The record gives the reactivity of an RNA of 177 nucleotides to 2A3 and DMS. The 2A3 profile rests on 2,013 reads. The data come from the RNA Mapping Database (RMDB), library M2PK50. DMS (dimethyl sulfate) methylates the pairing face of unpaired adenines and cytosines.
[RMDB]
RNA sequence: GGGAACGACUCGAGUAGAGUCGAAAAUUCCCCUAUUUCGAUAGGGGAACACCUCCGGGCGGCUCGCAGUUCCGACUUCCUCCUCCUCUGAGUCAAAGGGCGAUAGGCCUCGGUUCGCCGAGGCCAACUACCAUAAUCUCUUCGGAGAUUAUGGUAGAAAAGAAACAACAACAACAAC
Reactivity to 2A3 in 0.01 (KOAc 150mM, MgCl2 10mM, bicine 150mM(pH8.5), 24C), signal-to-noise 1, nucleotides 027 to 126: u010u030c000c000c000c000u020a050u030u140u060c170g120a020u020a020g000g030g040g030a000a010c030a040c020c000u000c050c030g120g040g010c030g020g000c020u030c020g000c030a030g010u080u070c030c000g040a040c030u030u030c000c010u000c020c000u000c000c010u040c010u030g010a000g030u030c040a020a060a080g040g020g000c020g030a040u090a150g020g000c000c000u010c020g020g040u030u040c120g030c020c000g020a000g000g000c000c010a000a000
Reactivity to DMS in 0.01 (KOAc 150mM, MgCl2 10mM, bicine 150mM(pH8.5), 24C), signal-to-noise 4, nucleotides 027 to 126: u000u000c010c000c010c000u000a000u000u000u010c130g020a020u000a010g010g000g010g000a020a020c100a120c050c010u000c060c050g000g000g010c050g010g000c030u000c050g010c080a090g010u000u000c040c030g000a110c080u000u000c020c020u000c010c020u000c020c000u000c040u010g010a090g020u010c060a060a080a130g000g010g020c060g000a090u010a090g020g010c000c000u000c000g010g010u000u010c200g020c000c010g010a010g030g010c000c000a010a040